[RMDB]
RNA sequence: GGGAACGACUCGAGUAGAGUCGAAAAUAAUAGGACCUAACUGUGUGGGAAUAAUGAACACCCAUGCGAACUUGAAUGCAACAUUCAUUACAGUGGCAAAGAAAGGAAAUGUUGCCUUCAUAAGCCAAUUAUUAGAGGGGUUCGCCCCUCUAAUAAUAAAAGAAACAACAACAACAAC
Reactivity to DMS in 0.01 (KOAc 150mM, MgCl2 10mM, bicine 150mM(pH8.5), 24C), signal-to-noise 5, nucleotides 027 to 126: u010a090a140u010a150g010g020a220c020c030u010a080a100c140u010g040u010g050u000g000g000g000a140a100u010a080a100u000g010a110a100c290a100c000c000c000a020u000g010c020g010a100a110c140u010u000g010a030a010u000g010c010a020a020c010a010u000u000c030a060u000u000a090c100a080g010u000g020g030c120a080a070a100g000a060a050a120g010g000a050a030a040u000g010u010u000g010c010c060u000u000c010a020u000a050a150g000c100c120a080
Reactivity to 2A3 in 0.01 (KOAc 150mM, MgCl2 10mM, bicine 150mM(pH8.5), 24C), signal-to-noise 2, nucleotides 027 to 126: u160a010a060u110a050g060g050a060c010c020u040a060a070c100u090g010u020g000u000g060g050g010a050a090u200a180a170u160g060a050a020c020a010c030c000c030a020u010g000c000g010a050a040c020u000u020g010a010a010u000g000c010a000a020c000a030u000u030c000a030u060u130a090c020a060g180u100g300g010c080a150a100a030g140a100a110a030g110g040a070a040a140u040g020u040u020g000c020c000u000u000c020a040u030a120a000g100c040c020a070
The record gives the reactivity of an RNA of 177 nucleotides to DMS and 2A3. It was measured as part of the RMDB library OK2TRN. For 2A3 the reverse transcriptase was SuperScript II with manganese. Conditions: 150 mM KOAc, 10 mM MgCl2 and 150 mM bicine (pH 8.5), 24 C. For DMS, 4,634 sequencing reads were counted.